[RMDB]
RNA sequence: GGGAACGACUCGAGUAGAGUCGAAAAAAUUAGAGGCAAUUUGAAAUAAUUUAAAUUAGCUCAACCCUACUGCACUUACCCAACUAGAUAACGGUGUAGUAGGGGUAAAUUCUCCGCAUUCGGUGCGCAACCACCUGAGGUUUCGACCUCAGGUGAAUCAUAAUAUCGGUUUCGACCGAUAUUAUGAAAAAGAAACAACAACAACAAC
Reactivity to 2A3 in 0.01 (KOAc 150mM, MgCl2 10mM, bicine 150mM(pH8.5), 24C), signal-to-noise 2, nucleotides 027 to 156: a000a000u220u160a060g010a030g040g050c020a030a010u000u020u050g040a090a060a060u300a080a200u140u080u100a030a040a010u050u020a040g000c000u010c060a030a040c010c000c000u000a000c000u000g000c000a000c000u010u080a040c030c020c080a150a120c150u090a040g050a140u090a230a070c060g000g000u000g000u000a000g000u000a000g000g000g000g000u020a000a000a000u040u030c000u000c010c040g010c000a010u060u040c110g250g000u030g000c020g010c020a030a060c000c010a010c000c000u000g000a000g000g020u000u120u100c170g080a030c000c000u000c000a000g020g000u000g010a000a010
Reactivity to DMS in 0.01 (KOAc 150mM, MgCl2 10mM, bicine 150mM(pH8.5), 24C), signal-to-noise 1, nucleotides 027 to 156: a080a110u000u020a150g000a170g010g000c020a000a010u010u040u010g020a010a040a220u010a120a140u000u000u000a050a000a080u010u000a130g020c000u000c000a100a060c000c010c000u000a020c010u010g000c010a000c070u000u010a030c030c050c040a090a280c160u000a140g000a100u010a080a100c090g000g000u010g020u000a000g010u000a020g010g020g010g000u000a010a050a100u010u000c010u000c050c070g000c070a220u000u020c140g000g030u000g000c000g040c100a030a110c080c030a000c000c000u000g010a000g020g010u000u000u020c270g020a060c010c000u010c000a000g010g010u000g000a010a040